[RMDB]
RNA sequence: GGGAACGACUCGAGUAGAGUCGAAAAGUGUCCGAAGGCGAAACAACAUCGGGUGAUGAAACAGAGGGAGAAGAAGACUUUACCCAUUUACCUUCAGAGGAAGAACAGCAAUCGCUGCCAUCCACACGAACCUUCGUGGAGCCAGUGUUCCGUCAGAAGUCUUAAACGUCUUCGGACGUUUAAGACUAAAAGAAACAACAACAACAAC
Reactivity to 2A3 in 0.01 (KOAc 150mM, MgCl2 10mM, bicine 150mM(pH8.5), 24C), signal-to-noise 1, nucleotides 027 to 156: g140u040g020u100c080c030g020a000a000g050g010c020g020a050a080a100c080a040a040c050a110u030c120g000g000g010u040g000a010u160g000a000a130a040c100a010g060a100g070g000g030a060g010a120a000g020a090a000g000a090c050u130u100u060a120c050c030c000a000u050u100u060a040c000c000u020u000c020a050g000a070g120g010a010a010g020a120a000c000a030g000c030a120a070u100c210g000c020u000g100c020c010a130u000c000c060a050c000a000c050g190a300a200c000c060u130u120c030g030u030g010g030a010g010c050c000a060g000u050g030u060u000c000c000g040u060c010a000g120a180